[RMDB]
RNA sequence: GGGAACGACUCGAGUAGAGUCGAAAAGAGGAUUGUGUGUACACAUCAGACAACACUGUUCUGCUGGAGACUCUCCAUCCACUGGCCUGCCUUGGGGAGCUAAAACUGGGAGAUGAGGAAACUCUGAAGGAAUUGGAGUUGCUGGAACUCAAGUGUGCGAUCUAUAAAACUUCGGUUUUAUAGAUCGAAAAGAAACAACAACAACAAC
Reactivity to 2A3 in 0.01 (KOAc 150mM, MgCl2 10mM, bicine 150mM(pH8.5), 24C), signal-to-noise 5, nucleotides 027 to 156: g070a020g030g030a060u050u060g000u010g010u020g030u100a030c060a000c010a080u120c050a050g070a080c040a100a040c060a050c110u050g060u090u030c030u040g090c030u040g040g010a060g030a130c010u010c000u000c040c000a040u030c030c020a050c070u030g040g010c010c030u030g030c020c040u050u070g010g000g020g020a030g000c020u080a100a060a070a050c030u020g000g040g010a090g010a040u070g020a010g020g050a050a070a050c050u020c030u080g060a060a030g030g020a020a050u100u130g040g010a040g030u030u040g010c030u020g020g020a010a030c020u030c080a070a040g060u030g010u040g060
Reactivity to DMS in 0.01 (KOAc 150mM, MgCl2 10mM, bicine 150mM(pH8.5), 24C), signal-to-noise 3, nucleotides 027 to 156: g010a110g020g020a090u000u010g040u000g010u000g030u010a180c050a180c060a110u000c050a110g020a110c020a070a080c060a080c020u000g030u000u000c020u000g020c040u010g010g000a230g010a070c040u000c010u000c040c070a120u000c040c010a080c040u000g020g030c020c030u010g030c060c050u010u000g020g020g030g000a060g040c060u000a040a050a070a050c040u000g000g020g010a100g010a100u010g000a090g010g000a080a070a110c030u010c040u000g000a080a150g010g020a050a130u000u000g000g010a180g020u000u000g000c000u000g000g010a080a060c040u010c030a030a110g020u000g020u000g030
This 207-nucleotide RNA was probed chemically with 2A3 and DMS. The 2A3 profile rests on 4,059 reads. DMS adducts were read by reverse transcription with MarathonRT. The DMS profile rests on 6,448 reads.